[RMDB]
RNA sequence: GGGAACGACUCGAGUAGAGUCGAAAAAAAACCAUUCGAGCUAGUCAAUGGGUGGCGUGUCUCUCCGCAGCGUGUUGGCGAAUGUAAAGAGUGACUAAGCAUGUAGUACCGAGGAUGUAGUAAUUUUGAAACUCGCGCAUCUUCGGAUGCGCGAGAACACAUAUUUGAGGUUCGCCUCAAAUAUGUGAAAAGAAACAACAACAACAAC
Reactivity to 2A3 in 0.01 (KOAc 150mM, MgCl2 10mM, bicine 150mM(pH8.5), 24C), signal-to-noise 3, nucleotides 027 to 156: a000a000a000a030c020c010a000u070u070c050g000a010g040c040u120a020g110u070c040a030a120u070g040g020g000u020g040g000c050g030u070g030u010c020u000c000u000c050c020g040c040a020g030c050g050u040g040u080u080g030g010c030g030a090a050u080g030u220a060a060a030g050a030g030u060g010a030c030u040a030a030g030c010a050u090g020u090a030g000u020a060c010c050g020a030g040g020a020u110g010u040a020g050u040a090a160u070u140u080u180g090a070a040a030c000u000c000g000c000g000c010a000u000c000u040u030c190g080g000a010u000g000c010g020c000g000a000g000a000a000
Reactivity to DMS in 0.01 (KOAc 150mM, MgCl2 10mM, bicine 150mM(pH8.5), 24C), signal-to-noise 2, nucleotides 027 to 156: a040a040a040a030c040c010a100u010u000c050g010a120g050c010u000a100g010u000c040a080a080u000g000g000g010u000g010g000c030g010u000g010u010c030u000c010u020c050c030g020c070a090g000c040g020u000g000u000u000g020g020c060g020a090a060u020g000u000a020a110a080g000a070g010u000g010a060c030u010a050a100g000c050a070u010g010u000a100g010u010a080c030c020g010a090g020g020a070u010g040u000a080g020u010a060a110u000u010u000u030g010a080a070a120c030u000c000g010c000g030c010a010u000c040u000u000c300g060g000a010u000g000c020g020c000g010a010g010a020a140

The record gives the reactivity of an RNA of 207 nucleotides to 2A3 and DMS. The reactions ran in a buffer of 150 mM KOAc, 10 mM MgCl2 and 150 mM bicine (pH 8.5), at 24 C. The 2A3 profile rests on 2,096 reads. The DMS profile rests on 4,415 reads. Reactivities are given for positions 27 through 156. High 2A3 reactivity points to a flexible backbone, as in loops and unpaired stretches.